[RMDB]
RNA sequence: GGGAACGACUCGAGUAGAGUCGAAAAAUAUCCUGCAUGUCGUAGGCCCAGAUGCCCGCGCUAAACAGGAUGUUUCUCUCCUUAGUAAGUGCUAUAAGGCUAUGAAUGCAUAUCCUCUUGUAGUCACGAAUCGGACUCUUCGGAGUCCGAAAAAGAAACAACAACAACAAC
Reactivity to 2A3 in 0.01 (KOAc 150mM, MgCl2 10mM, bicine 150mM(pH8.5), 24C), signal-to-noise 5, nucleotides 027 to 129: a000u000a020u010c000c000u000g000c020a040u100g120u290c000g000u000a030g000g000c030c010c000a060g010a030u210g000c040c000c000g010c000g000c020u040a070a110a020c000a000g000g020a000u000g000u000u050u000c060u000c000u030c000c010u000u010a010g030u110a210a040g000u010g010c010u000a000u000a040a020g000g000c010u020a050u110g060a260a110u210g140c040a000u040a050u140c000c020u140c050u010u030g010u030a030g040u100c040a000c040g010a040a020
Reactivity to DMS in 0.01 (KOAc 150mM, MgCl2 10mM, bicine 150mM(pH8.5), 24C), signal-to-noise 3, nucleotides 027 to 129: a060u020a090u010c010c070u020g020c160a300u040g020u090c010g110u000a150g000g070c020c040c240a120g040a150u020g000c040c020c040g030c000g100c000u000a030a080a130c020a010g020g030a060u010g020u000u000u000c090u060c030u000c040c040u020u070a000g010u050a170a160g020u000g010c010u050a010u000a000a000g020g030c110u040a010u030g020a250a070u000g050c040a030u010a030u010c080c050u050c070u040u000g010u050a010g020u050c010a000c030g010a200a060